The data come from the RNA Mapping Database (RMDB), library OK1LIB. Chemical mapping of a 177-nucleotide RNA with 2A3 and DMS. 2A3 adducts were read by reverse transcription with SuperScript II with manganese. Conditions: 150 mM KOAc, 10 mM MgCl2 and 150 mM bicine (pH 8.5), 24 C.
[RMDB]
RNA sequence: GGGAACGACUCGAGUAGAGUCGAAAAGCUGGUCCGGCUUGGCCCCAGCGAACACUUGACGAACGGAUAGUCCCGUCUUGUGGAUUAGGACGUUCUAGGUCCGGACUGGCCCCUAGUUCGUCCGAAAACCCUAAUACGCGUUCGCGCGUAUUAGGGUAAAAGAAACAACAACAACAAC
Reactivity to 2A3 in 0.01 (KOAc 150mM, MgCl2 10mM, bicine 150mM(pH8.5), 24C), signal-to-noise 5, nucleotides 027 to 126: g000c010u030g000g110u110c070c020g040g080c070u070u190g080g020c000c010c000c030a030g050c020g060a040a010c010a000c000u010u050g030a000c000g010a170a020c010g040g100a150u140a180g100u200c020c030c000g010u000c000u020u030g030u030g020g060a060u010u170a060g000g020a000c020g010u010u000c000u010a010g010g000u030c020c020g040g150a130c110u170g060g040c070c030c000c000u000a010g000u010u000c010g010u000c000c000g000a010a010a010
Reactivity to DMS in 0.01 (KOAc 150mM, MgCl2 10mM, bicine 150mM(pH8.5), 24C), signal-to-noise 3, nucleotides 027 to 126: g000c030u010g000g020u020c060c040g000g000c060u000u000g010g030c070c010c000c080a090g010c220g040a110a140c030a020c020u030u000g000a010c020g020a110a020c020g000g050a130u050a170g000u020c130c010c000g020u010c040u010u020g000u010g000g000a120u010u020a080g000g020a010c000g020u000u000c000u000a010g000g030u030c060c000g030g020a090c070u050g000g000c200c160c000c000u010a010g010u010u000c010g020u020c000c020g000a040a090a120